[RMDB]
RNA sequence: GGGAACGACUCGAGUAGAGUCGAAAACAAGGGCCGUUCGCGGCCCUUGAAAUAAAGAAUACGUGGUACGUACGAUAACGUACAAAAACAAAUAAACAAAUAAAAGAAUGGACUUCGGUCCAUUCAACGUAAGCAAUAGCUUCGGCUAUUGCUUACGAAAAGAAACAACAACAACAAC
Reactivity to 2A3 in 0.01 (KOAc 150mM, MgCl2 10mM, bicine 150mM(pH8.5), 24C), signal-to-noise 1, nucleotides 027 to 126: c010a020a000g010g050g040c000c000g060u040u060c170g040c010g100g000c020c000c000u000u000g000a000a000a000u080a000a050a020g140a050a100u100a200c030g000u040g050g000u000a000c000g030u010a020c060g150a200u030a000a030c000g020u000a010c040a000a090a020a050a050c050a010a090a000u260a120a050a030c090a070a170a050u300a120a230a010a040g000a020a020u000g000g000a000c020u030u040c260g110g010u000c010c000a000u020u000c000a000a000